[RMDB]
RNA sequence: GGGAACGACUCGAGUAGAGUCGAAAAGAUAUGGAUCCUAGCAGCACGAGGCCCAGGGAGAAUACAUGUCGGAAACGACAUGAUUCUUUGAUCUGGGAACUACCUCGUGCUGCUAGGAUCCUAAGUCCUGAAGUAUUACGUUCGCGUAAUACUUCAGAAAAGAAACAACAACAACAAC
Reactivity to DMS in 0.01 (KOAc 150mM, MgCl2 10mM, bicine 150mM(pH8.5), 24C), signal-to-noise 3, nucleotides 027 to 126: g010a080u010a260u000g010g010a010u000c000c000u010a000g010c000a020g000c000a020c000g020a010g000g000c030c010c010a020g010g010g010a050g000a020a010u000a200c010a010u000g000u000c010g000g000a120a070a300c000g020a010c000a000u000g010a090u000u000c010u000u000u010g000a100u010c010u020g000g020g010a020a010c060u020a300c030c000u000c010g020u000g000c000u000g000c010u000a000g000g010a000u000c000c000u000a020a070g000u000c050
Source: RMDB library TTRINS, as collected in RNAgym. Structure probing data (DMS) for a 177-nucleotide construct. For DMS the reverse transcriptase was MarathonRT. Values cover nucleotides 27 to 126. Conditions: 150 mM KOAc, 10 mM MgCl2 and 150 mM bicine (pH 8.5), 24 C.